Source information
The record gives the reactivity of an RNA of 207 nucleotides to 2A3.

RNA sequence: GGGAACGACUCGAGUAGAGUCGAAAAUUUGAAAGGUAUAGGCAAUGUUCAAUUUGGCUGCAGUGGAACUGACAAUCAUACUGAAUGUGAUGCCAAGAUGGACCCUAAAUUAGGAAAGAAAUUUAAGAAGUCAUAGCUUUAUUUAUGAUACUAAAGCCUUCGCGUACAUUUUCGAAUGUACGCGAAGAAAAGAAACAACAACAACAAC
Reactivity to 2A3 in 0.01 (KOAc 150mM, MgCl2 10mM, bicine 150mM(pH8.5), 24C), signal-to-noise 1, nucleotides 027 to 156: u170u160u230g060a060a050a000g010g000u050a000u140a090g020g000c100a170a000u070g000u020u000c060a070a110u100u000u060g030g000c010u000g000c060a000g000u130g040g080a020a020c000u070g140a190c110a050a050u080c000a030u050a130c020u050g050a100a130u090g020u080g100a100u020g020c060c000a000a000g110a060u050g000g000a030c020c000c000u050a090a120a080u140u060a010g060g080a000a000a100g060a100a140a050u040u260u130a090a010g000a080a000g010u000c000a030u060a060g000c030u040u020u000a000u070u160u000a080u290g030a040u010a140c050u050a000a030a000g000c030

The RNA was probed in 150 mM KOAc, 10 mM MgCl2 and 150 mM bicine (pH 8.5) at 24 C.
The 2A3 profile rests on 389 reads.